[RMDB]
RNA sequence: GGGAACGACUCGAGUAGAGUCGAAAAUAAACUUUUGAUAGUUUCUACGACACGGUAUCCGAGUUAGUCGACCAGCUAGAACAGCCUUGGACCGUCAACAACUUGUCCGCGUGCUAAGAAAUAACCACAUGGUCAUCCACUUCGGUGGAUGACCAUGAAAAGAAACAACAACAACAAC
Reactivity to 2A3 in 0.01 (KOAc 150mM, MgCl2 10mM, bicine 150mM(pH8.5), 24C), signal-to-noise 2, nucleotides 027 to 126: u160a000a040a020c010u050u080u100u180g160a090u110a080g010u000u000u150c060u030a080c040g060a010c010a000c120g000g000u070a000u000c010c010g000a000g000u090u280a030g010u040c030g000a120c030c000a000g010c010u050a060g010a150a050c050a090g000c000c050u030u080g000g000a110c070c000g120u140c030a000a040c020a000a000c070u100u090g030u000c000c000g060c000g040u090g000c030u040a060a000g080a020a100a300u090a000a050c000c000a010
This 177-nucleotide RNA was probed chemically with 2A3. The data come from the RNA Mapping Database (RMDB), library OK1LIB. The RNA was probed in 150 mM KOAc, 10 mM MgCl2 and 150 mM bicine (pH 8.5) at 24 C. Values are in units of 0.01, from 0 to 300, in steps of 10.